Notes: Structure probing data (2A3 and DMS) for a 177-nucleotide construct. For DMS the reverse transcriptase was MarathonRT. 2A3 is a SHAPE reagent: it acylates the 2'-hydroxyl of flexible nucleotides of all four kinds. For 2A3 the reverse transcriptase was SuperScript II with manganese. The 2A3 profile rests on 12,488 reads. For DMS, 10,592 sequencing reads were counted.
RNA sequence: GGGAACGACUCGAGUAGAGUCGAAAAGAUAUGGAUUGUUCUACCCACCGGGAGAGUAAUACCUCGGAAACGAGGUAUGCUUCGAGGAACAAUCCUAAGUCAAAAGGUAGCUCUUCGGAGCUACCAACUAUAUAAUAGCGUUCGCGCUAUUAUAUAGAAAAGAAACAACAACAACAAC
Reactivity to 2A3 in 0.01 (KOAc 150mM, MgCl2 10mM, bicine 150mM(pH8.5), 24C), signal-to-noise 6, nucleotides 027 to 126: g020a020u050a050u130g010g000a010u000u010g010u000u000c020u070a190c030c020c090a190c180c200g070g050g020a280g010a020g110u050a300a240u000a000c010c010u000c000g000g010a030a010a010c000g000a010g010g010u010a000u010g000c010u220u300c090g060a080g020g010a000a000c000a000a000u000c000c000u010a050a010g040u050c030a080a030a040a090g010g000u000a000g010c000u010c020u060u140c300g100g000a000g000c000u000a000c000c000a000a000
Reactivity to DMS in 0.01 (KOAc 150mM, MgCl2 10mM, bicine 150mM(pH8.5), 24C), signal-to-noise 7, nucleotides 027 to 126: g000a050u010a120u010g010g010a010u000u000g000u000u000c010u010a200c040c010c030a240c240c170g000g010g020a300g010a070g020u000a060a050u000a000c000c000u000c000g010g000a040a030a080c000g010a010g010g010u000a000u000g000c070u000u000c090g010a190g010g010a010a010c000a010a010u000c010c000u000a010a060g000u010c060a090a070a120a120g000g010u000a010g000c000u000c000u000u010c200g020g010a010g010c000u000a000c000c000a000a040